[RMDB]
RNA sequence: GGGAACGACUCGAGUAGAGUCGAAAAAAUAAUCAGGACAGGCUAAACAUUUGCUAUAUUAAGACCAUGCAUGUGUUCCCAGAUCUAGUUCUUGCCUUACGUCUGGUUUUAUAAAUACUGGUGAUAACAUAGAUGCAAACUUCGGUUUGCAUCUAUGAAAAGAAACAACAACAACAAC
Reactivity to DMS in 0.01 (KOAc 150mM, MgCl2 10mM, bicine 150mM(pH8.5), 24C), signal-to-noise 3, nucleotides 027 to 126: a020a040u000a040a030u000c040a020g000g000a090c080a080g010g020c030u010a050a060a090c050a090u000u000u000g020c020u010a080u000a060u010u010a100a070g000a110c160c050a030u000g000c050a050u000g000u000g010u000u000c030c030c030a140g010a100u000c120u030a080g000u000u010c040u000u000g020c040c010u000u010a080c280g000u000c030u000g010g000u000u000u000u030a050u010a060a060a070u000a080c060u000g000g020u010g000a100u020a050a150
Reactivity to 2A3 in 0.01 (KOAc 150mM, MgCl2 10mM, bicine 150mM(pH8.5), 24C), signal-to-noise 1, nucleotides 027 to 126: a020a030u230a040a000u100c040a030g010g020a020c010a010g030g000c070u070a040a080a000c000a060u040u060u040g020c030u080a000u040a070u300u060a050a000g010a010c030c050a040u070g040c000a010u090g080u000g000u030u050c010c010c010a010g040a060u020c050u020a030g070u050u030c000u030u060g020c000c010u060u020a010c040g040u010c020u040g000g060u090u000u000u000a150u040a000a070a020u140a060c020u040g110g000u030g100a100u000a170a000